[RMDB]
The record gives the reactivity of an RNA of 177 nucleotides to 2A3 and DMS.
Source: RMDB library OK2TST, as collected in RNAgym.
For 2A3 the reverse transcriptase was SuperScript II with manganese.
Conditions: 150 mM KOAc, 10 mM MgCl2 and 150 mM bicine (pH 8.5), 24 C.

RNA sequence: GGGAACGACUCGAGUAGAGUCGAAAAGUAGUCAUAGCAAUGGCCCUCCUCCUAGAACCAGAUAUAGUAAUUGCCGACGAGCCUACAACAGCCUUAGACGUAGUAGUCCAAGCUCAGAUCAUAAACCAUGUAUGUACUCCUUCGGGAGUACAUACAUAAAAGAAACAACAACAACAAC
Reactivity to 2A3 in 0.01 (KOAc 150mM, MgCl2 10mM, bicine 150mM(pH8.5), 24C), signal-to-noise 1, nucleotides 027 to 126: g180u160a000g030u040c010a030u090a070g000c090a160a220u110g070g050c030c000c000u020c040c040u010c030c020u010a020g020a130a030c010c020a060g010a030u070a010u050a130g020u040a060a100u010u060g040c050c010g000a010c040g000a030g060c000c040u070a030c000a060a020c010a020g050c010c010u020u140a020g020a010c000g070u060a030g030u050a030g030u070c010c000a010a000g010c010u020c000a090g000a140u100c030a050u130a100a000a010c010c020
Reactivity to DMS in 0.01 (KOAc 150mM, MgCl2 10mM, bicine 150mM(pH8.5), 24C), signal-to-noise 3, nucleotides 027 to 126: g030u010a080g010u000c010a050u010a140g000c080a070a080u010g000g010c020c010c010u000c030c000u000c010c030u000a060g000a120a120c070c040a050g000a040u000a070u010a090g000u020a070a090u000u000g010c040c050g000a040c100g010a090g000c040c000u010a070c090a040a070c090a070g010c060c030u000u000a070g000a070c060g040u020a130g000u000a080g000u010c020c050a050a160g010c020u000c070a020g000a090u010c050a080u000a070a090a100c120c070
For DMS the reverse transcriptase was MarathonRT.